[RMDB]
RNA sequence: GGGAACGACUCGAGUAGAGUCGAAAAGAAGCGUAAUCGCAAGUUAGGGAUUGUGGUGAAUAUCAACCUGACAGAGCGAUCGGCAAUCAAGAAGCUUCCGGCGAAUGAAGCGCAACGCCUAUAGAAAGGGAUAAAUUAUCUUCGGAUAAUUUAUCCCAAAAGAAACAACAACAACAAC
Reactivity to DMS in 0.01 (KOAc 150mM, MgCl2 10mM, bicine 150mM(pH8.5), 24C), signal-to-noise 5, nucleotides 027 to 126: g010a070a110g010c030g020u010a120a030u000c000g000c000a170a210g000u000u000a020g010g000g000a130u030u010g030u010g020g020u020g000a160a090u030a070u010c050a050a090c000c000u000g000a020c030a050g010a300g020c020g000a020u000c130g020g030c060a050a080u000c160a090a120g000a140a130g000c040u010u020c030c070g000g010c020g000a110a090u030g010a110a080g010c080g020c070a090a090c110g000c020c010u010a110u040a090g010a080a090a100
Reactivity to 2A3 in 0.01 (KOAc 150mM, MgCl2 10mM, bicine 150mM(pH8.5), 24C), signal-to-noise 5, nucleotides 027 to 126: g100a030a030g050c010g040u120a020a050u010c000g000c020a080a040g000u000u010a020g040g060g040a180u050u120g100u120g100g170u180g120a130a030u180a040u300c000a040a060c010c000u000g000a010c020a030g140a010g010c000g000a000u010c040g040g000c040a010a050u100c040a020a070g100a070a010g060c000u040u000c030c010g040g070c020g010a060a130u120g040a070a000g030c020g000c000a030a030c030g020c010c030u120a070u040a140g240a030a110a010